[RMDB]
RNA sequence: GGGAACGACUCGAGUAGAGUCGAAAAUAGCGGUGAUGGUACUACAGCAUAUGCUAACUCUGCUUUUAACAUCUUUCAAGCUGUUUCUGCUAAUGUUAAUAAGCUUUUGGGGGUUGAUUCAAACGCUUGUAACAACGUUACAGUAAAAUCCAUACAAGUAGUGAUAACCAUUCGUGGUUAUCACUACAAAAGAAACAACAACAACAAC
Reactivity to 2A3 in 0.01 (KOAc 150mM, MgCl2 10mM, bicine 150mM(pH8.5), 24C), signal-to-noise 5, nucleotides 027 to 156: u080a000g030c020g030g010u060g020a060u040g010g040u080a040c030u040a030c040a020g030c030a070u130a040u210g040c030u030a030a040c040u010c030u070g020c000u030u020u030u040a040a030c020a050u030c060u060u280u170c100a090a020g010c010u030g070u100u090u050c050u060g010c030u040a040a010u030g000u010u010a050a040u080a130a000g000c000u050u040u090u070g040g000g000g000g010u050u050g060a130u080u060c050a050a030a030c040g000c020u040u070g020u050a060a020c090a030a050c070g010u020u020a000c000a000g010u060a010a040a050a060u040c040c020a040u080a180c040a020a180
Reactivity to DMS in 0.01 (KOAc 150mM, MgCl2 10mM, bicine 150mM(pH8.5), 24C), signal-to-noise 3, nucleotides 027 to 156: u000a060g020c010g020g020u000g000a090u000g010g000u010a090c050u000a060c060a060g020c040a220u000a060u020g030c060u010a050a090c060u000c060u000g010c020u000u000u000u030a030a050c000a040u000c030u000u010u000c040a050a110g030c020u000g020u000u010u010c030u000g010c080u000a060a050u010g000u000u000a040a070u000a030a040g030c040u000u000u000u000g020g010g010g040g000u000u010g020a120u010u000c080a120a050a020c020g000c010u010u030g020u000a140a150c010a030a000c010g020u000u000a060c060a110g000u000a030a030a030a070u000c020c030a110u000a110c110a070a190
Chemical mapping of a 207-nucleotide RNA with 2A3 and DMS.